[RMDB]
RNA sequence: GGGAACGACUCGAGUAGAGUCGAAAAGACUCUGAUAAAUAGAGAUAUGUAUGACUGAGUCUCAGGGCAUCAGAGCAAACGGAAGGGCCCUGCAUCCUCACUCAUACUUGAUGCAAUAGCCUUCCAAGAUUGUUGUCUAUUUCGAUAGAUAGCAAUCAAAAGAAACAACAACAACAAC
Reactivity to 2A3 in 0.01 (KOAc 150mM, MgCl2 10mM, bicine 150mM(pH8.5), 24C), signal-to-noise 9, nucleotides 027 to 126: g010a000c000u000c000u000g010a020u040a150a040a020u090a050g010a000g010a010u020a020u130g040u020a070u140g120a120c070u030g010a010g020u000c000u000c010a000g000g000g000c000a020u010c010a030g010a010g030c060a110a060a020c050g000g000a010a010g010g010g000c000c000c000u000g000c000a010u000c000c010u010c010a030c000u120c020a040u060a130c000u020u040g010a000u010g000c000a010a020u010a040g040c000c000u000u000c000c000a000a020
Reactivity to DMS in 0.01 (KOAc 150mM, MgCl2 10mM, bicine 150mM(pH8.5), 24C), signal-to-noise 9, nucleotides 027 to 126: g000a140c000u000c000u000g000a020u000a040a050a020u010a170g010a020g000a030u010a020u050g000u000a090u020g010a150c130u000g000a020g000u000c030u000c010a040g000g000g000c020a010u000c000a020g000a030g010c080a070a100a120c100g000g000a020a010g000g010g000c000c010c000u000g000c030a010u000c020c040u000c020a030c110u030c230a070u040a020c030u000u000g000a010u000g000c010a020a020u000a040g000c010c010u000u000c000c010a070a110